An RNA of 177 nucleotides, treated with 2A3 and read out base by base.
For 2A3, 509 sequencing reads were counted.
2A3 adducts were read by reverse transcription with SuperScript II with manganese.
RNA sequence: GGGAACGACUCGAGUAGAGUCGAAAAUGAGAAUACUUUUAGUACAAGCGAGUACACGCAGUAUAGUGCCACUUGUGAGAGAAUACUUUUAGUACAAGCGAGUACACGCAGUAUACUGCCACUUGUGCGGAGAUAGGGACUUCGGUCCCUAUCUCCGAAAAGAAACAACAACAACAAC
Reactivity to 2A3 in 0.01 (KOAc 150mM, MgCl2 10mM, bicine 150mM(pH8.5), 24C), signal-to-noise 1, nucleotides 027 to 126: u100g040a080g130a050a060u140a050c000u240u000u000u000a090g170u140a010c030a000a080g010c000g000a000g040u060a080c000a030c140g000c010a000g000u000a010u060a000g250u010g000c000c000a040c000u000u000g020u030g040a020g000a000g060a180a120u070a050c000u000u100u100u270a000g000u030a000c000a000a010g000c000g000a000g000u120a000c000a000c030g000c000a000g060u000a000u000a000c050u000g020c000c010a010c000u000u020g090u010g060